[RMDB]
RNA sequence: GGGAACGACUCGAGUAGAGUCGAAAAACGGAGUACGGUCCGAAGGGUUCGGGGUACUAGUGUGAAUGCCCGGCUAGUACCCUGUGCUAGUGGUUUAUCUACUGAUGUUCAAUUAAGGGCAUUUGAAAAAAGACUCCUAACUUCGGUUAGGAGUCAACGGGAAAUUAAUCUUCGGAUUAAUUUCCCGAAAAGAAACAACAACAACAAC
Reactivity to 2A3 in 0.01 (KOAc 150mM, MgCl2 10mM, bicine 150mM(pH8.5), 24C), signal-to-noise 1, nucleotides 027 to 156: a000c040g070g000a020g020u240a070c070g020g030u000c020c020g040a140a000g060g020g020u060u170c030g000g000g000g000u010a000c000u000a000g020u000g070u070g240a060a010u010g000c000c010c010g060g030c000u000a000g010u020a030c070c010c020u000g010u020g000c020u010a020g030u010g080g140u120u200u160a080u120c010u050a000c020u030g090a030u100g010u170u170c150a130a070u270u210a180a300g000g000g010c010a000u060u000u100g000a010a000a000a000a000a000g000a000c000u020c020c000u000a000a000c000u080u020c290g050g000u000u000a000g000g000a000g000u000c000a000a000